[RMDB]
RNA sequence: GGGAACGACUCGAGUAGAGUCGAAAAGAUAUGGACAGCGGUCGCUACUCGACGAAGAUACAGGGAAAUAUCGGAAACGAUAUUUCCCUGUAUCAGAGAGUAGACCCGACGACCGCUGUCCUAAGUCGAAAUACCGAUUGUUCGCAAUCGGUAUUUCAAAAGAAACAACAACAACAAC
Reactivity to DMS in 0.01 (KOAc 150mM, MgCl2 10mM, bicine 150mM(pH8.5), 24C), signal-to-noise 2, nucleotides 027 to 126: g000a120u000a300u000g010g020a000c030a020g020c040g010g000u010c000g000c010u000a000c000u000c000g010a210c300g000a150a130g010a010u010a010c000a000g010g000g000a020a000a000u000a000u010c010g000g020a220a090a210c000g010a010u010a000u000u020u010c000c000c000u000g000u000a000u010c000a040g000a140g000a010g020u000a010g000a100c130c180c160g020a300c010g000a020c000c000g020c000u000g010u000c000c000u000a010a080g020u010c130